[RMDB]
RNA sequence: GGGAACGACUCGAGUAGAGUCGAAAAGCUGAAUGAAAAAGUACGCAAAGAAGAGAGUGCUAAGGCUGAUGAAGAGCGCUUAGCUCGCAUCAAUCAACGCCAAAAAGCGUUAGGUAAAUCGACCUAACUAUAUGGAUGGGUUCGCCCAUCCAUAUAGAAAAGAAACAACAACAACAAC
Reactivity to 2A3 in 0.01 (KOAc 150mM, MgCl2 10mM, bicine 150mM(pH8.5), 24C), signal-to-noise 5, nucleotides 027 to 126: g020c030u060g040a080a080u120g100a100a140a000a020a040g060u060a020c020g010c080a050a060a070g060a150a030g090a040g020a010g030u100g010c010u020a060a060g020g010c030u040g010a030u030g030a200a190g000a010g030c080g020c200u200u150a020g000c000u000c020g030c000a020u020c010a020a030u040c020a000a050c040g010c020c000a090a070a000a010a020g050c030g020u030u020a020g000g020u050a110a120a180u100c040g020a040c000c000u020a020a030
Reactivity to DMS in 0.01 (KOAc 150mM, MgCl2 10mM, bicine 150mM(pH8.5), 24C), signal-to-noise 8, nucleotides 027 to 126: g020c050u000g010a100a070u010g000a080a050a090a110a070g010u010a050c150g010c080a070a070a100g000a090a080g010a070g000a110g020u010g000c040u000a090a170g000g010c070u010g010a020u010g000a070a130g000a010g000c000g020c280u010u010a090g010c000u000c010g010c020a010u000c020a040a040u000c050a050a090c170g010c010c030a030a070a060a100a110g000c090g010u000u000a010g000g020u010a030a100a100u010c120g000a060c000c010u000a020a100
Source information
Structure probing data (2A3 and DMS) for a 177-nucleotide construct. Conditions: 150 mM KOAc, 10 mM MgCl2 and 150 mM bicine (pH 8.5), 24 C. The DMS profile rests on 9,867 reads. DMS (dimethyl sulfate) methylates the pairing face of unpaired adenines and cytosines. 2A3 adducts were read by reverse transcription with SuperScript II with manganese. For DMS the reverse transcriptase was MarathonRT. Reactivities are rounded to 0.1 and cut off at 0 and 3.